[RMDB]
RNA sequence: GGGAACGACUCGAGUAGAGUCGAAAAGACCUGGUCGCCGGGCAGUGCAAGGAACGGCGAGGAGGCGGGCGCAGGCACAGCAGCUCCCACUCCCCGAGCUGCGCACAGCCCUCGAUCCGUCCCAGGCAACUGAAAUCCGGUUCGCCGGAUUUCAGUUAAAAGAAACAACAACAACAAC
Reactivity to DMS in 0.01 (KOAc 150mM, MgCl2 10mM, bicine 150mM(pH8.5), 24C), signal-to-noise 1, nucleotides 027 to 126: g020a100c150c030u000g000g000u000c010g010c090c070g070g000g040c030a090g010u000g000c090a100a300g000g000a020a100c010g010g000c250g000a050g000g000a130g000g010c220g000g050g060c040g020c050a130g000g020c080a090c180a120g000c050a050g000c000u000c010c010c050a130c040u000c000c070c000c070g000a060g000c000u000g010c300g030c060a000c060a110g030c020c010c000u000c020g000a070u000c020c090g020u020c060c000c000a080g000g010c080

An RNA of 177 nucleotides, treated with DMS and read out base by base. The reactions ran in a buffer of 150 mM KOAc, 10 mM MgCl2 and 150 mM bicine (pH 8.5), at 24 C. The data come from the RNA Mapping Database (RMDB), library OK2TRN.